[RMDB]
RNA sequence: GGGAACGACUCGAGUAGAGUCGAAAAACAUUAAGUUUCGACUUAAUGUAAACCCGAUGAAGCGGCACAUACGGAGCUUCAUACUUCUAAGAGUGCAAAUAAAAAGUUGAUCCUUCGGGAUCAACAACAUUACAUGUGCCUUCGGGCACAUGUAAUGAAAAGAAACAACAACAACAAC
Reactivity to 2A3 in 0.01 (KOAc 150mM, MgCl2 10mM, bicine 150mM(pH8.5), 24C), signal-to-noise 2, nucleotides 027 to 126: a030c000a000u010u010a020a000g000u010u040u180c150g040a020c000u000u000a000a000u000g000u000a060a020a000c030c000c000g000a050u080g010a020a000g020c060g090g050c060a020c010a090u280a060c100g220g090a050g030c000u030u040c000a010u060a060c060u090u090c020u120a080a040g060a030g110u100g050c050a020a050a120u200a050a130a020a010a010g000u000u000g010a000u010c000c000u020u040c200g090g030g000a000u020c000a000a000c000a010a000
Reactivity to DMS in 0.01 (KOAc 150mM, MgCl2 10mM, bicine 150mM(pH8.5), 24C), signal-to-noise 2, nucleotides 027 to 126: a080c010a000u010u010a000a000g010u000u010u020c210g000a020c000u000u000a000a000u000g010u000a050a090a070c020c010c020g040a010u010g010a030a030g000c050g000g050c010a040c010a030u030a090c090g020g040a160g020c020u020u000c060a040u000a090c080u000u020c100u000a080a150g000a060g040u000g040c000a130a090a060u010a020a060a070a070a050g000u000u000g030a010u000c000c000u010u000c300g000g000g000a010u000c000a010a010c000a040a150